Notes
The data come from the RNA Mapping Database (RMDB), library OK2TST. This 177-nucleotide RNA was probed chemically with DMS and 2A3.

RNA sequence: GGGAACGACUCGAGUAGAGUCGAAAAAUUGACCGUGGCGAGAUGAAUGAGUGGCUGGAAGACACCAUGGCUGCCAUCGAGGCCGGCGGUCAUCCAGCAAAGGUCUGCGAGAUCGGUACCGGCACGGACCGUGAAUAUAUUUCGAUAUAUUCACGGUAAAAGAAACAACAACAACAAC
Reactivity to DMS in 0.01 (KOAc 150mM, MgCl2 10mM, bicine 150mM(pH8.5), 24C), signal-to-noise 9, nucleotides 027 to 126: a100u010u000g010a140c020c010g030u000g010g010c020g010a150g010a110u010g010a100a100u010g010a170g020u010g010g010c050u000g010g010a070a080g010a080c050a060c030c030a160u010g020g010c020u000g010c150c070a090u000c110g010a180g000g010c010c020g010g010c080g000g000u000c010a030u000c020c010a030g000c040a080a090a110g010g010u000c010u000g010c110g010a120g010a040u000c020g000g010u010a110c050c010g000g000c030a050c070g000g000
Reactivity to 2A3 in 0.01 (KOAc 150mM, MgCl2 10mM, bicine 150mM(pH8.5), 24C), signal-to-noise 7, nucleotides 027 to 126: a000u100u110g040a020c010c010g010u020g030g050c030g020a070g020a130u120g070a170a110u120g010a050g160u080g080g000c020u020g030g040a060a020g060a030c040a030c100c020a030u100g050g000c020u030g020c040c030a090u110c060g020a090g080g020c000c000g010g020c040g010g000u000c000a010u000c000c000a000g010c050a090a100a050g060g020u020c020u040g070c110g050a130g000a040u030c010g020g030u060a070c020c000g010g020c020a010c030g020g020